[RMDB]
RNA sequence: GGGAACGACUCGAGUAGAGUCGAAAACAGCCUUCAGCGACGUGCAUGAUGGCCUCGACCAUAACGUUAAAGCCUUCCGGGUCGUUGUCGUCGUAUUCCGACAGCUUGCGCUCCGUGUCCUGCAUGGUCGGGAGAGGGUAUUCGUACCCUCUCCCGAAAAAGAAACAACAACAACAAC
Reactivity to DMS in 0.01 (KOAc 150mM, MgCl2 10mM, bicine 150mM(pH8.5), 24C), signal-to-noise 2, nucleotides 027 to 126: c200a190g000c060c000u010u000c030a080g020c020g000a030c160g000u010g010c040a050u000g010a040u010g010g010c000c050u010c200g000a060c020c050a070u020a070a110c170g000u010u010a070a150a180g010c060c010u010u020c050c080g020g000g000u000c020g010u000u000g010u010c020g000u010c010g000u010a140u010u000c060c010g030a130c050a070g000c040u000u000g000c060g000c020u010c030c030g040u010g010u010c020c060u010g020c050a120u000g010g030
Reactivity to 2A3 in 0.01 (KOAc 150mM, MgCl2 10mM, bicine 150mM(pH8.5), 24C), signal-to-noise 2, nucleotides 027 to 126: c010a020g040c000c000u050u070c030a030g030c010g190a190c140g230u160g020c080a180u090g010a020u030g040g000c010c050u060c030g050a080c000c000a080u130a120a080c080g070u110u160a120a080a010g050c010c000u040u070c030c000g000g000g090u030c000g020u010u060g140u040c010g020u010c020g020u030a200u130u090c020c000g010a000c020a000g000c010u030u150g010c010g010c030u010c040c020g010u040g020u020c010c000u020g000c030a100u070g030g010